RNA sequence: GGGAACGACUCGAGUAGAGUCGAAAAGAUAUGGACCUGCCAGACAGUCAGGGUCUCGGAAACGAGACCUGACCUGGAACUACAGGUCCUAAGUCAAAAGUCUUCGAGUCUUCGGACUCGAAGACAAUCCAAUCCCAUUGUUCGCAAUGGGAUUGGAAAAAGAAACAACAACAACAAC
Reactivity to DMS in 0.01 (KOAc 150mM, MgCl2 10mM, bicine 150mM(pH8.5), 24C), signal-to-noise 1, nucleotides 027 to 126: g000a030u000a300u000g040g010a000c020c000u020g000c010c040a040g010a220c140a080g000u000c010a040g020g000g010u000c000u000c000g030g000a090a120a180c010g000a010g010a160c000c000u010g000a010c180c080u010g000g020a110a040c010u030a280c000a020g010g000u000c000c000u000a000a090g050u000c040a120a150a120a100g000u000c000u000u000c010g010a010g000u000c000u000u030c250g010g010a000c010u000c010g000a030a000g000a000c000a020a020
Reactivity to 2A3 in 0.01 (KOAc 150mM, MgCl2 10mM, bicine 150mM(pH8.5), 24C), signal-to-noise 1, nucleotides 027 to 126: g020a000u070a090u160g050g020a000c000c000u060g080c000c000a050g070a300c050a060g000u020c020a010g280g180g120u000c000u000c020g010g000a090a140a060c010g000a010g000a020c000c000u000g010a000c000c010u000g000g050a010a010c060u290a070c180a020g050g030u010c000c000u000a060a040g020u010c040a000a010a240a100g040u000c010u020u000c000g000a000g000u080c050u210u300c300g170g000a000c010u040c010g000a000a000g000a000c010a010a000